[RMDB]
RNA sequence: GGGAACGACUCGAGUAGAGUCGAAAACGUAAAGGGCGAGCUUUUGUCCGGAGUGGUUCCGCCGUGAUCGGGCCAUGCAAUAGUUGCCAACGACAACUAUGCUCCGGUUGCUCAGGCAGCGUAACGCACAAUGGAACAACCUUCGGGUUGUUCCAAACUGUAUAUAGAGAUUCGUCUCUAUAUACAGAAAAGAAACAACAACAACAAC
Reactivity to 2A3 in 0.01 (KOAc 150mM, MgCl2 10mM, bicine 150mM(pH8.5), 24C), signal-to-noise 5, nucleotides 027 to 156: c020g010u070a090a040a050g090g040g010c030g010a070g010c040u070u100u140u160g060u040c010c000g010g000a020g010u040g020g010u260u300c040c030g000c040c080g150u150g030a150u110c010g020g000g000c030c020a040u120g030c020a050a170u010a010g000u010u000g000c030c100a140a050c100g050a080c020a000a000c000u000a000u020g010c010u010c000c000g000g030u010u060g010c010u000c050a020g070g000c010a010g010c030g060u090a100a030c050g030c060a030c030a080a110u070g010g000a010a000c000a010a000c000c000u050u070c130g090g000g000u010u000g000u000u000c000c000a000a000a000
Reactivity to DMS in 0.01 (KOAc 150mM, MgCl2 10mM, bicine 150mM(pH8.5), 24C), signal-to-noise 2, nucleotides 027 to 156: c050g020u010a030a080a110g010g020g000c020g000a090g020c120u000u010u000u000g010u010c040c040g000g020a130g030u000g000g030u000u000c030c020g030c050c060g010u000g020a060u000c060g010g020g030c040c080a110u000g020c050a090a090u000a010g020u000u000g010c010c000a160a160c140g040a120c000a000a020c000u010a030u000g010c030u020c030c030g000g010u000u000g010c010u000c060a070g010g020c020a090g030c050g020u010a050a160c100g000c060a080c080a130a240u010g020g000a030a020c020a010a030c000c010u000u000c300g050g000g030u010u000g010u010u010c000c000a010a010a050
Structure probing data (2A3 and DMS) for a 207-nucleotide construct. 2A3 adducts were read by reverse transcription with SuperScript II with manganese. The reactions ran in a buffer of 150 mM KOAc, 10 mM MgCl2 and 150 mM bicine (pH 8.5), at 24 C. For 2A3, 4,463 sequencing reads were counted.